The record gives the reactivity of an RNA of 177 nucleotides to DMS and 2A3. Values cover nucleotides 27 to 126. The RNA was probed in 150 mM KOAc, 10 mM MgCl2 and 150 mM bicine (pH 8.5) at 24 C. It was measured as part of the RMDB library OK2TST.

[RMDB]
RNA sequence: GGGAACGACUCGAGUAGAGUCGAAAAGCUAUUUUGCAGGAUCCACGCGCUUUCCUCGCACAACAGGCGGGCGUUAAUCGGCACCAUAAUCGCGCCAAUUUUUGCCAGCCCGAACCAGCAAAAGAUACAGACUAAGCUCAUUCGUGAGCUUAGUCUGAAAAGAAACAACAACAACAAC
Reactivity to DMS in 0.01 (KOAc 150mM, MgCl2 10mM, bicine 150mM(pH8.5), 24C), signal-to-noise 2, nucleotides 027 to 126: g000c100u000a090u000u010u000u000g010c000a050g000g010a060u020c080c060a100c200g020c040g030c050u000u000u000c040c010u000c100g020c050a110c120a070a070c160a040g000g000c020g010g010g010c020g000u000u000a020a010u000c070g010g000c030a020c030c120a050u020a120a150u030c140g040c030g000c000c010a000a010u000u000u000u000u020g010c000c020a070g000c010c020c050g000a110a140c060c040a100g000c060a030a020a030a060g000a170u010a190
Reactivity to 2A3 in 0.01 (KOAc 150mM, MgCl2 10mM, bicine 150mM(pH8.5), 24C), signal-to-noise 1, nucleotides 027 to 126: g050c000u070a100u090u120u070u090g030c010a010g000g020a070u040c060c020a080c050g050c000g040c010u040u000u000c000c000u000c000g050c000a050c010a140a090c020a050g010g010c010g010g010g060c010g020u030u020a030a000u060c010g000g050c030a010c040c030a080u180a230a100u230c080g000c000g010c060c020a010a040u030u000u000u050u110g000c020c020a010g000c000c000c000g010a010a030c020c000a000g070c010a000a000a050a030g100a100u160a080